The data come from the RNA Mapping Database (RMDB), library OK2TRN. The record gives the reactivity of an RNA of 177 nucleotides to DMS and 2A3. 2A3 adducts were read by reverse transcription with SuperScript II with manganese.
[RMDB]
RNA sequence: GGGAACGACUCGAGUAGAGUCGAAAAUCUGGUCAAAUCUGGUGUGGUUGUCAGGUAGCAAUUCUAUACAUUUGGCAAUCAGUGAAUUGAUAGGCGGUUUGCGAAUGGAUCCCUACUACCUGGUGACAGUACUCAUACAGUUCGCUGUAUGAGUACUAAAAGAAACAACAACAACAAC
Reactivity to DMS in 0.01 (KOAc 150mM, MgCl2 10mM, bicine 150mM(pH8.5), 24C), signal-to-noise 6, nucleotides 027 to 126: u010c040u010g000g020u000c080a050a080a070u010c080u010g020g020u010g020u010g010g020u000u000g020u000c010a010g010g020u000a030g000c060a030a090u000u010c190u000a060u000a070c040a040u000u000u000g020g030c010a030a030u000c020a060g020u000g010a070a150u010u000g010a110u010a110g000g010c040g010g010u000u000u000g010c020g000a020a030u000g000g000a070u000c020c060c020u000a100c020u000a030c000c000u000g010g010u000g010a050c090
Reactivity to 2A3 in 0.01 (KOAc 150mM, MgCl2 10mM, bicine 150mM(pH8.5), 24C), signal-to-noise 5, nucleotides 027 to 126: u020c000u050g060g030u060c040a040a040a150u060c080u090g000g040u100g060u050g100g010u040u030g040u050c010a010g000g020u010a010g010c020a030a070u150u030c050u090a070u030a110c030a050u040u050u080g210g000c000a010a020u040c020a040g040u030g140a120a150u170u110g080a120u130a120g150g010c030g020g030u040u040u060g030c000g020a020a020u030g030g010a040u040c020c000c000u000a030c010u010a000c000c000u020g030g000u020g010a010c020